Chemical mapping of a 177-nucleotide RNA with DMS and 2A3. 2A3 adducts were read by reverse transcription with SuperScript II with manganese. The DMS profile rests on 6,927 reads. Values cover nucleotides 27 to 126. It was measured as part of the RMDB library TTRDEL. The 2A3 profile rests on 12,445 reads. The reactions ran in a buffer of 150 mM KOAc, 10 mM MgCl2 and 150 mM bicine (pH 8.5), at 24 C.
RNA sequence: GGGAACGACUCGAGUAGAGUCGAAAAGAUAUGGAUCAUAAGGGAGCCUACGUCAAUCGGAAACGAUUGACUAGGCGUUGAUCUUAUGAGUCCUAAGUCAAAAGCCAUUAGGUUCGCCUAAUGGCAAGUACCAUAGGUUGUUCGCAACCUAUGGUACAAAAGAAACAACAACAACAAC
Reactivity to DMS in 0.01 (KOAc 150mM, MgCl2 10mM, bicine 150mM(pH8.5), 24C), signal-to-noise 4, nucleotides 027 to 126: g000a010u000a210u010g000g000a230u010c000a000u000a010a010g000g010g000a020g030c000c000u010a010c270g000u010c000a010a010u000c010g020g010a070a040a080c010g000a010u000u000g000a020c010u000a010g010g010c010g010u000u010g010a030u010c000u000u000a000u000g000a040g010u010c000c000u010a030a120g000u000c020a090a080a160a150g000c000c000a000u000u000a010g010g000u000u010c290g010c000c010u000a000a000u000g000g020c000a010a010
Reactivity to 2A3 in 0.01 (KOAc 150mM, MgCl2 10mM, bicine 150mM(pH8.5), 24C), signal-to-noise 2, nucleotides 027 to 126: g020a000u050a000u110g000g000a000u020c000a000u010a000a000g040g000g000a020g030c000c010u030a040c130g010u010c000a000a000u010c000g010g050a050a010a030c000g010a010u000u020g000a000c010u000a000g000g000c000g010u020u010g000a010u020c000u000u000a000u000g010a010g180u020c000c010u020a030a030g040u030c020a040a050a100a100g000c000c000a000u000u010a010g080g050u050u060c300g110c080c000u000a000a000u000g000g000c000a010a000